[RMDB]
RNA sequence: GGGAACGACUCGAGUAGAGUCGAAAAAAUGUUCUGUUCGCAGAACAUUAAGCUGGUGUCCCGACCAGGCUGGUUGUCAGUACACGAAGUGCCAGAUCGGGAAUGCCUCCGGCUUCGGCCGGAGGAACUCUGGAAGGAAUUUCGAUUCCUUCCAGAGAAAAGAAACAACAACAACAAC
Reactivity to DMS in 0.01 (KOAc 150mM, MgCl2 10mM, bicine 150mM(pH8.5), 24C), signal-to-noise 2, nucleotides 027 to 126: a010a000u000g010u010u000c000u000g000u000u000c160g040c000a000g000a000a010c000a000u000u000a060a090g010c040u000g010g010u000g000u000c000c000c000g000a040c020c000a020g010g020c010u000g010g000u000u030g010u000c090a140g000u010a090c190a130c090g010a110a090g030u010g000c010c000a050g000a080u000c010g000g010g000a050a070u010g000c000c000u000c000c000g030g010c000u000u010c140g020g010c000c000g000g010a020g000g000a010a030
Reactivity to 2A3 in 0.01 (KOAc 150mM, MgCl2 10mM, bicine 150mM(pH8.5), 24C), signal-to-noise 2, nucleotides 027 to 126: a000a010u010g000u000u010c010u010g040u040u020c200g030c080a000g010a000a010c000a000u010u010a050a010g060c000u010g000g000u030g060u020c000c000c000g010a000c000c000a010g060g020c010u000g010g020u110u110g110u100c070a070g120u230a090c070a030c140g070a130a010g070u040g140c000c000a010g000a030u000c000g000g000g030a020a030u060g060c000c010u030c020c030g030g050c010u050u060c210g090g030c040c000g010g000a000g010g000a000a010